[RMDB]
RNA sequence: GGGAACGACUCGAGUAGAGUCGAAAAGAUAUGGAGAACUACCCACCUUUACCAGCGUUGAAAUCGGAAACGAUGGAGCUGAAGUAAAGAGGUUCUCCUAAGUCAAACAGAUGCUUCGGCAUCUGAACUGUACAGCCUAGUUCGCUAGGCUGUACAGAAAAGAAACAACAACAACAAC
Reactivity to 2A3 in 0.01 (KOAc 150mM, MgCl2 10mM, bicine 150mM(pH8.5), 24C), signal-to-noise 1, nucleotides 027 to 126: g000a100u220a130u290g020g000a030g000a020a000c010u230a180c020c030c030a060c030c000u030u000u030a020c000c000a000g010c000g300u300u030g000a030a060a010u010c000g000g020a070a040a050c010g000a010u030g050g040a020g000c020u010g050a120a030g040u010a010a000a010g020a050g000g000u000u000c000u000c000c000u010a030a010g110u080c200a060a030a120c010a030g020a010u030g070c050u050u190c240g130g000c010a000u010c000u000g010a030a020
Reactivity to DMS in 0.01 (KOAc 150mM, MgCl2 10mM, bicine 150mM(pH8.5), 24C), signal-to-noise 2, nucleotides 027 to 126: g000a080u010a100u000g000g010a000g000a040a010c010u000a060c010c010c020a300c100c010u000u000u000a000c030c000a040g000c000g010u010u010g000a050a150a040u000c010g000g010a150a130a110c000g000a030u000g040g000a110g000c000u020g010a020a110g000u000a000a010a030g000a100g030g010u090u000c000u000c000c000u020a030a040g000u010c080a040a040a220c030a000g010a010u000g000c000u000u010c240g010g030c000a000u000c010u000g010a020a120